[RMDB]
Structure probing data (DMS and 2A3) for a 177-nucleotide construct.

RNA sequence: GGGAACGACUCGAGUAGAGUCGAAAAUCGGCCACGCUGACGGGUACGUGGUGGUGUCUCCGUGUGUUUUAAUUUGCAGCUCCGCCAUGACAUGGGCUGUCGUGCAUAUUUCAGGGGCUUACUUGCCCAUAUCCCCGCUAUUCGUAGCGGGGAUAUGAAAAGAAACAACAACAACAAC
Reactivity to DMS in 0.01 (KOAc 150mM, MgCl2 10mM, bicine 150mM(pH8.5), 24C), signal-to-noise 9, nucleotides 027 to 126: u010c080g000g010c040c020a050c050g010c050u000g010a080c070g010g000g010u010a070c050g020u000g010g020u000g010g010u000g000u000c020u010c050c070g010u010g010u010g010u010u010u010u010a060a130u000u010u010g010c150a050g010c020u010c010c040g010c080c020a040u000g000a070c070a150u010g010g010g010c030u000g010u010c050g020u000g010c070a100u000a100u000u000u010c130a130g010g010g000g010c030u000u010a070c140u000u010g010c020c020
Reactivity to 2A3 in 0.01 (KOAc 150mM, MgCl2 10mM, bicine 150mM(pH8.5), 24C), signal-to-noise 5, nucleotides 027 to 126: u060c010g060g010c030c010a030c050g000c040u070g060a050c050g080g000g060u110a070c040g030u020g010g040u020g030g010u030g040u020c020u030c050c040g060u070g010u010g060u080u060u030u150a150a220u070u110u160g060c030a010g020c000u020c020c020g040c040c020a030u040g020a040c040a090u110g020g070g020c010u000g010u030c020g000u030g000c030a060u050a180u180u190u140c060a040g000g000g000g040c000u020u050a060c040u070u090g020c000c000
Values cover nucleotides 27 to 126. The RNA was probed in 150 mM KOAc, 10 mM MgCl2 and 150 mM bicine (pH 8.5) at 24 C. Source: RMDB library OK2TST, as collected in RNAgym.